Chemical mapping of a 177-nucleotide RNA with DMS and 2A3. Values cover nucleotides 27 to 126. Source: RMDB library OK2TST, as collected in RNAgym. DMS adducts were read by reverse transcription with MarathonRT. The reactions ran in a buffer of 150 mM KOAc, 10 mM MgCl2 and 150 mM bicine (pH 8.5), at 24 C. For 2A3, 1,126 sequencing reads were counted.
RNA sequence: GGGAACGACUCGAGUAGAGUCGAAAAAAAGAUGCAUUGGUGUCACUACUAAGGUGGUAACUAGCACCAGUGUUUUCGCUAACAGCAUGGUAAAAACGCACCUUAAGGCUCUGAGGCGAGUUCAAAGAAACACAUGAGCAUUCGUGCUCAUGUGUUUAAAAGAAACAACAACAACAAC
Reactivity to DMS in 0.01 (KOAc 150mM, MgCl2 10mM, bicine 150mM(pH8.5), 24C), signal-to-noise 2, nucleotides 027 to 126: a130a080a130g030a060u000g010c000a020u010u000g010g020u000g010u010c230a060c040u000a050c070u010a100a060g040g000u000g000g010u000a110a090c210u040a130g000c030a030c000c010a000g010u000g000u000u010u000u040c070g010c120u010a060a080c180a050g000c070a050u020g010g010u010a020a030a040a060a060c190g010c080a050c050c010u000u000a040a130g010g010c040u010c050u010g000a130g020g010c040g000a060g010u000u000c030a040a160a130g000
Reactivity to 2A3 in 0.01 (KOAc 150mM, MgCl2 10mM, bicine 150mM(pH8.5), 24C), signal-to-noise 2, nucleotides 027 to 126: a000a000a000g080a020u070g020c010a010u010u000g000g010u030g100u140c050a010c030u050a030c070u130a110a290g260g000u000g020g040u040a170a000c070u060a060g050c020a000c000c000a010g030u000g010u090u010u020u090c000g040c020u000a050a030c000a080g110c000a050u100g060g040u170a070a070a020a060a030c110g020c020a010c000c010u050u050a070a080g040g000c010u000c020u050g070a040g030g140c030g000a010g000u070u070c080a070a110a050g080